[RMDB]
RNA sequence: GGGAACGACUCGAGUAGAGUCGAAAAAGCGUAGCGGUACGCCGCUACGCAAGGCGCAUUUGAACUGUAUUGUACGCCUUGCAUAAAGCAAAAGUACUAAAAAAACGUGCCGGUACGACGGCACGAAAAAACAUCCAUUGGUUCGCCAAUGGAUGAACUUUAUAGCGCAGUUCGCUGCGCUAUAAAGAAAAGAAACAACAACAACAAC
Reactivity to DMS in 0.01 (KOAc 150mM, MgCl2 10mM, bicine 150mM(pH8.5), 24C), signal-to-noise 1, nucleotides 027 to 156: a050g000c010g040u000a010g030c020g040g000u000a040c230g060c010c010g030c010u000a020c040g030c040a000a000g010g050c000g000c000a080u000u010u010g000a080a210c080u000g000u000a300u000u010g020u000a010c000g010c010c000u000u000g000c010a100u000a080a050a090g000c030a050a090a150a170g000u000a130c070u040a010a000a070a080a040a050a210c010g040u000g000c020c000g000g040u020a050c100g000a070c000g040g120c040a010c000g000a000a000a030a170a050a040c000a010u000c000c010a010u010u000g010g010u000u010c250g040c010c000a000a010u000g000g010a000u000g000a000a010
Reactivity to 2A3 in 0.01 (KOAc 150mM, MgCl2 10mM, bicine 150mM(pH8.5), 24C), signal-to-noise 4, nucleotides 027 to 156: a000g010c010g000u000a000g010c000g020g010u020a020c200g060c040c000g000c000u000a000c000g000c000a000a000g000g000c010g020c050a110u090u090u300g140a140a070c140u090g040u210a110u140u110g030u030a020c000g000c020c000u010u010g000c010a040u140a210a130a040g030c050a030a030a030a010g070u040a050c100u210a010a050a040a020a010a030a070c000g010u000g000c010c010g000g050u110a080c090g040a040c000g090g000c000a000c000g000a020a000a000a000a010a000c000a000u000c000c000a000u000u010g020g010u040u030c120g020c080c000a000a000u000g000g000a000u000g000a000a010
Chemical mapping of a 207-nucleotide RNA with DMS and 2A3. The RNA was probed in 150 mM KOAc, 10 mM MgCl2 and 150 mM bicine (pH 8.5) at 24 C. Reactivities are rounded to 0.1 and cut off at 0 and 3. Values cover nucleotides 27 to 156.